[RMDB]
RNA sequence: GGGAACGACUCGAGUAGAGUCGAAAAGAACCGCGAUUCGUCGCGGUUCGAGCGCCGUAGCGCGCAACGGCGUAACCGCAGCAUUAGCGCGCAGCUGCCGACGAUCGGGUGGUUUCGACCACCCGAAGCAUACGUAAUGUUUCGACAUUACGUAUGCAAAAGAAACAACAACAACAAC
Reactivity to 2A3 in 0.01 (KOAc 150mM, MgCl2 10mM, bicine 150mM(pH8.5), 24C), signal-to-noise 4, nucleotides 027 to 126: g000a000a000c000c000g000c010g010a020u040u060c220g020u010c000g130c000g000g000u000u000c000g000a000g000c010g000c000c010g020u030a050g000c010g000c000g000c030a030a010c000g000g000c010g020u030a050a040c010c030g020c030a020g000c050a140u070u190a080g010c010g000c020g000c000a010g040c020u110g050c040c020g090a140c070g070a120u040c000g000g010g000u000g000g020u020u070u140c190g070a020c000c000a000c000c000c000g000a000a000
Reactivity to DMS in 0.01 (KOAc 150mM, MgCl2 10mM, bicine 150mM(pH8.5), 24C), signal-to-noise 9, nucleotides 027 to 126: g000a010a000c000c000g020c000g010a030u000u010c190g020u000c000g030c000g000g010u000u000c000g000a140g010c000g010c000c000g020u000a050g010c020g010c010g000c010a030a010c010g000g000c000g010u000a080a270c030c010g010c090a080g010c190a100u010u000a070g000c010g020c010g010c010a180g010c070u000g010c040c050g010a080c160g000a130u000c000g010g000g020u000g010g010u000u000u010c180g010a040c000c000a010c000c000c000g000a000a040
This 177-nucleotide RNA was probed chemically with 2A3 and DMS. For 2A3, 23,652 sequencing reads were counted. Conditions: 150 mM KOAc, 10 mM MgCl2 and 150 mM bicine (pH 8.5), 24 C. Values cover nucleotides 27 to 126.